[RMDB]
RNA sequence: GGGAACGACUCGAGUAGAGUCGAAAACAUUUAGCAGAGACCCAAAAGAACAGUGCCUUUUAAAAGGCAGAGGUUAUGUCUCUCACACACACCCAGCACAAGUCCAAGACCAGCAUGGCAUCUCAGCUCCAUCAACCUCAGGAACCGAGCUCCUGCAGUUUCGAUAUACGUUCGCGUAUAUCGAAACAAAAGAAACAACAACAACAAC
Reactivity to DMS in 0.01 (KOAc 150mM, MgCl2 10mM, bicine 150mM(pH8.5), 24C), signal-to-noise 1, nucleotides 027 to 156: c080a100u040u010u000a140g020c040a050g000a050g000a060c010c080c050a070a070a090a140g010a040a060c050a050g020u000g010c040c000u000u010u000u010a060a160a200a020g030g060c010a060g040a090g000g010u000u000a090u010g000u010c000u000c010u010c060a120c060a070c080a150c050a100c030c000c000a200g010c050a070c050a100a080g010u010c080c010a040a080g000a060c040c010a120g000c000a120u000g010g020c080a060u000c070u020c030a100g010c070u000c030c010a060u000c000a070a040c020c010u010c040a120g040g010a060a090c070c000g000a090g000c040u000c000c020u040g020c080a170
Reactivity to 2A3 in 0.01 (KOAc 150mM, MgCl2 10mM, bicine 150mM(pH8.5), 24C), signal-to-noise 3, nucleotides 027 to 156: c010a040u120u140u190a060g010c060a000g050a010g000a050c030c030c030a060a160a010a000g030a050a020c030a040g080u020g000c010c020u040u150u080u180a110a300a040a000g010g000c010a010g010a030g000g020u090u060a070u190g020u000c030u000c000u020c010a030c000a000c000a000c010a050c080c000c020a010g000c040a020c000a060a070g040u050c030c000a050a020g030a050c010c010a010g040c040a070u050g020g000c030a070u010c030u010c010a030g010c020u000c010c010a100u070c040a050a090c020c020u040c030a020g030g000a020a020c060c070g020a030g020c020u000c000c000u030g010c040a010
This 207-nucleotide RNA was probed chemically with DMS and 2A3. DMS adducts were read by reverse transcription with MarathonRT. The 2A3 profile rests on 2,162 reads. For DMS, 1,621 sequencing reads were counted.